This 170-nucleotide RNA was probed chemically with DMS and 2A3. DMS adducts were read by reverse transcription with MarathonRT. It was measured as part of the RMDB library 15KLIB. 2A3 adducts were read by reverse transcription with SuperScript II with manganese.

RNA sequence: GGGAACGACUCGAGUAGAGUCGAAAAGGAUGUGAGGAAGGUACUAUGUACUUUGUGCCUAGAGCUAAGUCUGUUGUCUCAAGGAUUGGAGACUCCAUCUUUACAGGCUGUACUGGCUCUUGGAACAUUACGGGCCACUUCGGUGGCCCGAAAAGAAACAACAACAACAAC
Reactivity to DMS in 0.01 (KOAc 150mM, MgCl2 10mM, bicine 150mM(pH8.5), 24C), signal-to-noise 1, nucleotides 027 to 129: g010g000a000u030g000u050g010a040g010g040a130a060g010g000u000a030c100u000a130u060g040u010a080c140u000u020u020g020u040g020c030c000u000a090g000a000g060c060u020a050a000g040u020c030u000g040u040u000g040u020c060u070c150a170a040g080g000a130u060u140g000g030a160g020a110c150u050c070c060a010u060c060u000u000u020a030c110a080g000g000c000u000g000u030a060c200u000g040g020c000u000c000u020u000g020g020a030a020c060a010u040u030a090
Reactivity to 2A3 in 0.01 (KOAc 150mM, MgCl2 10mM, bicine 150mM(pH8.5), 24C), signal-to-noise 2, nucleotides 027 to 129: g000g100a000u100g010u160g010a090g000g120a020a020g020g000u020a100c060u090a040u150g030u000a030c000u100u060u090g020u000g060c030c000u010a000g020a000g000c020u030a020a000g000u000c010u000g070u040u080g050u060c000u020c120a060a100g060g020a070u110u190g130g000a040g000a000c010u030c040c020a120u040c000u030u070u010a000c010a000g000g000c030u000g090u230a020c060u060g020g010c000u000c000u000u020g000g000a010a010c010a010u000u050a020